RNA sequence: GGGAACGACUCGAGUAGAGUCGAAAACAUUUAUUAAUAUUAGAUGACCCUGGAGAGCUGGUUGUCUUAAUAAACGAUACGGGUCCUCGUUAGUGAAAAUAUCCUUAAGGAAGUAAACGCAUCGGGAGAUAUCGUCGAAGUUCGCUUCGACGAUAUCAAAAGAAACAACAACAACAAC
Reactivity to 2A3 in 0.01 (KOAc 150mM, MgCl2 10mM, bicine 150mM(pH8.5), 24C), signal-to-noise 2, nucleotides 027 to 126: c010a010u040u030u150a170u110u130a120a110u100a120u200u080a020g000a010u020g020a020c010c030c000u000g100g080a100g000a000g050c160u080g000g030u020u000g000u000c000u000u030a050a010u030a070a070a000c000g020a000u090a070c030g010g010g080u000c000c000u000c030g020u010u040a010g010u050g190a000a040a130a090u090a060u050c010c060u060u070a040a040g060g020a040a030g070u220a030a090a060c070g000c020a030u020c010g010g030g000a100